[RMDB]
RNA sequence: GGGAACGACUCGAGUAGAGUCGAAAAGCGAUAGCGUUCGCGCUAUCGCAAAUAAAUUCAGCGGUUUAAAUUUCGAGGCCAUAACCGCUGAUCGCCUCGAAAAAACUCGACAGUUCGCUGUCGAGAAGGGCUAUUAUAUCUUCGGAUAUAAUAGCCCAAAAGAAACAACAACAACAAC
Reactivity to 2A3 in 0.01 (KOAc 150mM, MgCl2 10mM, bicine 150mM(pH8.5), 24C), signal-to-noise 2, nucleotides 027 to 126: g000c000g000a000u010a000g020c000g000u020u040c240g000c000g000c100u000a000u000c000g000c000a020a000a010u000a000a010a020u050u010c020a000g000c010g010g080u060u090u250a100a210a170u170u170u140c080g040a040g050g000c020c010a000u050a080a040c030c000g000c010u000g000a020u010c060g020c000c000u000c000g000a090a070a010a030a040a070c010u000c000g000a000c000a000g020u080u100c110g040c070u010g000u000c000g010a000g000a010a010
Reactivity to DMS in 0.01 (KOAc 150mM, MgCl2 10mM, bicine 150mM(pH8.5), 24C), signal-to-noise 1, nucleotides 027 to 126: g000c020g000a030u010a020g000c000g030u000u010c250g020c030g000c010u010a000u020c010g010c000a030a000a070u020a080a100a140u000u000c000a010g030c030g000g020u000u000u000a050a090a100u000u000u000c080g020a090g020g030c070c220a100u020a040a030c000c000g000c000u000g000a030u020c050g000c000c000u000c110g020a000a060a050a080a070a220c020u000c000g010a040c000a000g030u000u020c220g000c000u000g030u010c000g000a000g030a040a040